Structure probing data (DMS) for a 177-nucleotide construct. It was measured as part of the RMDB library OK2TST. Values are in units of 0.01, from 0 to 300, in steps of 10. The reactions ran in a buffer of 150 mM KOAc, 10 mM MgCl2 and 150 mM bicine (pH 8.5), at 24 C.
[RMDB]
RNA sequence: GGGAACGACUCGAGUAGAGUCGAAAAGAACCGAGGCCAACAGUUGUCGUGACCCGCAGACGGCCAGAGGGUUUUUCACGGCUUUCCGCCAGUUUGGAGCGGACAUUUUCCAGCUUCAUCAGCACAAUGCUAAUCGACGAUUCGUCGUCGAUUAGCAAAAAGAAACAACAACAACAAC
Reactivity to DMS in 0.01 (KOAc 150mM, MgCl2 10mM, bicine 150mM(pH8.5), 24C), signal-to-noise 1, nucleotides 027 to 126: g010a130a100c020c010g000a180g010g030c050c010a030a110c110a160g020u000u030g020u000c030g000u000g000a090c030c040c050g000c080a140g000a080c180g000g000c000c030a110g010a130g000g000g030u000u000u000u000u000c180a050c030g010g010c030u000u000u000c040c110g020c040c050a060g000u000u000u070g010g000a000g000c030g000g000a060c300a060u000u010u000u000c070c040a140g000c010u000u020c080a060u000c150a190g000c100a080c150a110a070
The DMS profile rests on 717 reads.